This 207-nucleotide RNA was probed chemically with 2A3 and DMS. For DMS, 4,911 sequencing reads were counted. It was measured as part of the RMDB library OK3TST. For 2A3 the reverse transcriptase was SuperScript II with manganese.
RNA sequence: GGGAACGACUCGAGUAGAGUCGAAAAGAGGCUUCCAUAAAGCCUAAAUAAGAUCCACGUGUAGAAGCACUUCUACCACGUUUAUCCAUUUCGUCAGAGUAUACUGGCGAAGCCGUGGGGUGAAAUAAUAAAACCAGGAAAGCAUUCUAUGGUAUUACUCUAGCAAUUGCUUCGGCGAUUGCUGGAGAAAAGAAACAACAACAACAAC
Reactivity to 2A3 in 0.01 (KOAc 150mM, MgCl2 10mM, bicine 150mM(pH8.5), 24C), signal-to-noise 3, nucleotides 027 to 156: g080a000g000g000c000u060u030c110c020a180u240a060a070a010g000c000c010u010a020a060a020u060a000a010g020a030u000c010c000a010c010g020u020g000u000a020g000a020a010g020c060a010c090u010u000c000u010a010c020c040a000c000g000u010u050u010a050u020c050c040a050u010u000u020c010g010u000c000a000g010a010g160u140a090u060a230c010u010g000g000c000g000a010a000g030c020c010g060u040g000g000g030g000u020g030a060a080a010u050a040a010u020a040a090a010a010c030c010a010g040g070a050a020a040g040c000a040u050u020c020u040a120u040g000g000u030a060u080u110a040
Reactivity to DMS in 0.01 (KOAc 150mM, MgCl2 10mM, bicine 150mM(pH8.5), 24C), signal-to-noise 3, nucleotides 027 to 156: g010a050g020g020c000u060u000c030c260a090u010a130a120a030g010c000c020u000a020a050a110u010a130a120g010a090u000c040c080a030c030g000u000g050u000a030g020a070a070g000c200a140c130u000u000c020u010a050c030c010a050c020g000u000u000u040a080u020c030c030a140u000u000u000c010g040u000c000a040g000a300g000u010a160u010a090c000u010g030g000c000g030a010a030g000c150c070g030u000g000g020g000g030u010g000a070a080a090u020a150a130u000a080a060a090a090c020c020a070g010g000a060a050a110g010c020a080u010u000c040u010a050u000g010g010u000a120u000u000a120